[RMDB]
RNA sequence: GGGAACGACUCGAGUAGAGUCGAAAAGGGACCGUUGCGCGUCGGCUACACCCCAAGACCGCCGCUCCCCAUUUUAUCUAUCACCUGCCCGAUGAUGGACACUUGUUCCAGGUUGUCGGGUUGCACCACUUCGUCGGGGAAUCUACCUUUGUCAGGAACGUAUUAAUAAGUUCGCUUAUUAAUACGUAAAAGAAACAACAACAACAAC
Reactivity to 2A3 in 0.01 (KOAc 150mM, MgCl2 10mM, bicine 150mM(pH8.5), 24C), signal-to-noise 5, nucleotides 027 to 156: g020g000g020a050c050c040g080u090u120g040c050g010c030g030u040c010g020g010c020u090a050c040a110c040c040c020c010a010a040g040a080c010c020g020c000c000g040c010u040c000c030c010c010a030u120u130u100u140a110u040c090u040a110u100c050a060c100c020u050g000c000c000c000g020a020u030g020a020u030g040g010a000c040a040c210u160u290g060u200u040c020c010a060g100g060u060u080g030u060c020g000g000g000u000u040g000c010a020c010c010a050c050u120u080c090g070u050c060g030g000g000g030a010a030u010c040u100a120c010c000u090u100u140g090u140c040a010g070g020a070
Reactivity to DMS in 0.01 (KOAc 150mM, MgCl2 10mM, bicine 150mM(pH8.5), 24C), signal-to-noise 2, nucleotides 027 to 156: g050g010g030a070c100c070g030u010u010g030c040g050c020g070u000c030g030g040c020u000a140c050a190c020c030c030c030a150a180g010a060c030c020g040c040c010g040c030u000c020c000c060c050a180u010u010u000u010a100u020c060u000a090u000c040a040c040c020u010g040c060c050c020g020a040u000g000a070u000g000g000a070c030a160c160u000u000g010u000u000c020c040a090g010g030u010u010g040u000c020g010g000g020u000u000g010c030a130c030c050a050c030u000u000c050g020u000c090g000g000g000g000a070a090u020c040u000a080c010c010u000u000u000g000u000c070a080g020g010a170